Chemical mapping of a 177-nucleotide RNA with DMS and 2A3. The DMS profile rests on 1,953 reads. Reactivities are given for positions 27 through 126. The 2A3 profile rests on 1,734 reads. For DMS the reverse transcriptase was MarathonRT. The RNA was probed in 150 mM KOAc, 10 mM MgCl2 and 150 mM bicine (pH 8.5) at 24 C. High 2A3 reactivity points to a flexible backbone, as in loops and unpaired stretches.
RNA sequence: GGGAACGACUCGAGUAGAGUCGAAAAAUAAAUAGCGUAAUGGAGAUUGGGAGUGUACGCUAAGUGUGUGUUGUAUACCUAACGUCCAAUUGAACACACACACAGUUGGACCUAAUGUCCAAAAAAACAAGUGUAUCGAGUUCGCUCGAUACACUUGAAAAGAAACAACAACAACAAC
Reactivity to DMS in 0.01 (KOAc 150mM, MgCl2 10mM, bicine 150mM(pH8.5), 24C), signal-to-noise 2, nucleotides 027 to 126: a060u000a020a110a100u010a030g000c030g010u000a070a080u010g000g000a060g000a170u000u010g020g020g000a170g000u010g030u000a010c020g000c000u000a050a110g000u000g010u000g020u000g000u030u000g000u000a090u000a080c030c060u000a070a090c090g010u000c030c030a050a180u000u010g010a030a010c020a010c000a000c010a010c020a080c110a080g010u010u000g000g010a070c010c180u010a020a050u010g000u000c010c000a000a000a100a090a030a040a130
Reactivity to 2A3 in 0.01 (KOAc 150mM, MgCl2 10mM, bicine 150mM(pH8.5), 24C), signal-to-noise 2, nucleotides 027 to 126: a000u260a000a060a030u080a010g000c000g010u030a040a020u090g030g090a110g030a100u050u150g050g040g000a080g160u120g010u080a000c000g000c030u030a160a200g000u000g000u000g010u010g020u100u040g050u080a060u020a070c010c060u040a090a050c090g050u010c030c030a040a060u100u090g060a110a000c020a010c020a000c000a000c000a000c010a030g050u090u060g040g020a000c000c010u060a120a040u140g000u000c000c000a040a040a000a000a000a000a040